[RMDB]
RNA sequence: GGGAACGACUCGAGUAGAGUCGAAAAUUGAAGGUAAAACAGCCUGUGGGUGAAACACACCCACAGGGCCCAUAGGGCGCUAGCACUCUGGUAUCACGGUACCCUUGUGCGCCUGUUUUACCGAAGGGGCGACUCUAGUUCGCUAGAGUCAAAAGAAACAACAACAACAAC
Reactivity to 2A3 in 0.01 (KOAc 150mM, MgCl2 10mM, bicine 150mM(pH8.5), 24C), signal-to-noise 9, nucleotides 027 to 129: u110u120g060a090a020g000g000u010a000a000a000a000c000a000g000c000c000u000g000u000g000g000g010u010g040a060a090a010c130a010c000a000c050c000c010a000c000a000g000g000g000c000c000c000a040u220a140g000g000g000c020g000c090u110a040g000c010a000c000u000c000u000g000g000u010a000u020c030a040c220g130g000u000a000c000c000c000u000u000g000u000g000c010g000c000c000u000g000u000u000u000u000a000c000c000g000a000a000g010g010g020g030c080
Reactivity to DMS in 0.01 (KOAc 150mM, MgCl2 10mM, bicine 150mM(pH8.5), 24C), signal-to-noise 9, nucleotides 027 to 129: u010u010g020a140a100g000g010u000a030a000a000a020c010a000g000c000c020u000g010u000g000g000g010u030g030a090a190a120c290a190c010a030c000c000c010a000c010a000g010g010g020c000c030c000a030u070a070g000g010g000c000g000c020u030a050g020c000a020c020u000c010u000g010g030u000a010u000c020a110c290g050g020u010a010c000c000c000u000u000g000u000g020c010g010c000c000u000g000u010u000u020u000a000c000c000g010a050a030g000g000g000g000c300
Structure probing data (2A3 and DMS) for a 170-nucleotide construct. For DMS the reverse transcriptase was MarathonRT. The 2A3 profile rests on 115,367 reads. 2A3 is a SHAPE reagent: it acylates the 2'-hydroxyl of flexible nucleotides of all four kinds. The DMS profile rests on 135,839 reads. For 2A3 the reverse transcriptase was SuperScript II with manganese. Conditions: 150 mM KOAc, 10 mM MgCl2 and 150 mM bicine (pH 8.5), 24 C.